[RMDB]
RNA sequence: GGGAACGACUCGAGUAGAGUCGAAAAUCAGGCUUGAACCUUUUACAUGCUCAAGAGAUUCAAAUGGUCUCUGUGUGUAGAUCAUGCCACCGCCUCCAAAGCCUAAUCCACAUCACUUCUGAGAGGCAAGGCUGAGCAUAUGGUGACAUCAGCUCUGCAAGAAGAGGCGAUUCGUCGCCUCUUCUUGAAAAGAAACAACAACAACAAC
Reactivity to DMS in 0.01 (KOAc 150mM, MgCl2 10mM, bicine 150mM(pH8.5), 24C), signal-to-noise 2, nucleotides 027 to 156: u020c060a050g020g000c020u020u000g010a280a060c060c000u000u010u000u010a070c020a050u020g010c030u010c040a120a060g010a030g010a030u010u000c030a080a130a200u010g020g020u000c000u010c000u000g020u000g030u020g000u000a090g000a050u000c060a040u010g000c050c000a190c010c040g030c040c010u000c000c040a090a050a070g010c010c030u010a070a090u000c070c070a100c060a170u000c080a080c080u000u010c120u000g010a180g000a110g040g020c070a080a030g030g040c000u000g030a080g030c040a100u010a100u000g000g000u000g000a120c050a060u010c050a080g020c020u010c000u000g020
Reactivity to 2A3 in 0.01 (KOAc 150mM, MgCl2 10mM, bicine 150mM(pH8.5), 24C), signal-to-noise 4, nucleotides 027 to 156: u110c000a000g000g030c010u040u020g040a080a130c000c020u060u070u050u100a080c070a020u010g030c000u020c080a070a010g000a000g010a040u240u150c120a090a180a290u300g040g010u010c000u000c020u010g020u010g010u000g030u100a010g030a170u110c020a010u080g000c020c000a060c110c050g000c000c010u000c000c000a030a030a010g030c000c010u170a150a120u150c080c020a110c020a130u150c040a040c060u140u030c050u100g090a140g000a010g210g000c020a020a060g020g000c030u020g010a010g000c000a010u000a040u080g030g010u050g010a030c010a070u140c040a040g000c030u050c020u210g000
An RNA of 207 nucleotides, treated with DMS and 2A3 and read out base by base.
For DMS the reverse transcriptase was MarathonRT.
It was measured as part of the RMDB library OK3TST.